[RMDB]
RNA sequence: GGGAACGACUCGAGUAGAGUCGAAAAUCUAUCUCCAGCCCAUGUUUACGACACGAAUGGGCUGUUGCAAAUUACGUAUAGCUCUUGCAACAUCGUGUCGAAACGUUCCCAAGCUAUACGCCACAAAUACCUGUUAGAUGUUCGCAUCUAACAGGUAAAAAGAAACAACAACAACAAC
Reactivity to 2A3 in 0.01 (KOAc 150mM, MgCl2 10mM, bicine 150mM(pH8.5), 24C), signal-to-noise 4, nucleotides 027 to 126: u020c010u020a070u070c040u000c020c010a010g010c000c010c000a040u100g080u110u160u080a070c010g010a000c000a000c000g040a080a110u160g060g080g000c030u010g000u010u000g000c010a000a050a120u230u080a090c020g010u010a000u000a010g000c010u020c040u180u090g050c050a060a020c000a060u040c010g000u000g010u030c000g020a120a090a000c020g000u010u010c000c010c010a000a000g000c020u010a010u010a020c010g030c020c010a120c010a030a080a000
Reactivity to DMS in 0.01 (KOAc 150mM, MgCl2 10mM, bicine 150mM(pH8.5), 24C), signal-to-noise 4, nucleotides 027 to 126: u020c160u010a100u000c040u000c040c040a050g000c010c000c030a160u000g020u010u000u000a140c050g010a030c030a000c010g000a060a110u010g010g010g010c100u000g000u000u000g010c060a040a060a100u000u000a060c050g000u000a000u000a010g000c000u000c240u000u000g010c080a030a050c040a030u000c000g030u010g000u000c000g010a050a070a260c040g000u000u000c000c000c010a130a030g010c000u000a000u000a010c000g020c120c210a090c160a050a030a100